The record gives the reactivity of an RNA of 177 nucleotides to 2A3. It was measured as part of the RMDB library RFM100. The 2A3 profile rests on 526 reads. Values cover nucleotides 27 to 126. The reactions ran in a buffer of 150 mM KOAc, 10 mM MgCl2 and 150 mM bicine (pH 8.5), at 24 C. 2A3 adducts were read by reverse transcription with SuperScript II with manganese.
[RMDB]
RNA sequence: GGGAACGACUCGAGUAGAGUCGAAAACAACAAUGGUAUGCGUGGUUUGCGGCCCUAAUUUAUUCAGCACGCGACUGCCGCAUCCCGCACGGGAGGCGCAGCUGCUGCAUGACGCUUUAACGUCGCACUCCGCAUUCUCCUUCGGGAGAAUGCGGAGAAAAGAAACAACAACAACAAC
Reactivity to 2A3 in 0.01 (KOAc 150mM, MgCl2 10mM, bicine 150mM(pH8.5), 24C), signal-to-noise 1, nucleotides 027 to 126: c040a010a040c070a040a200u250g080g000u130a040u050g080c050g150u070g000g030u000u000u030g000c000g050g030c000c020c000u080a100a050u070u050u190a140u120u050c140a000g050c000a000c100g000c000g000a090c010u110g070c130c050g070c000a000u000c000c000c040g120c040a080c100g000g000g000a030g000g000c000g000c000a030g000c000u010g000c000u010g020c030a130u080g000a000c020g020c040u000u040u120a090a010c070g000u000c000g010c040a010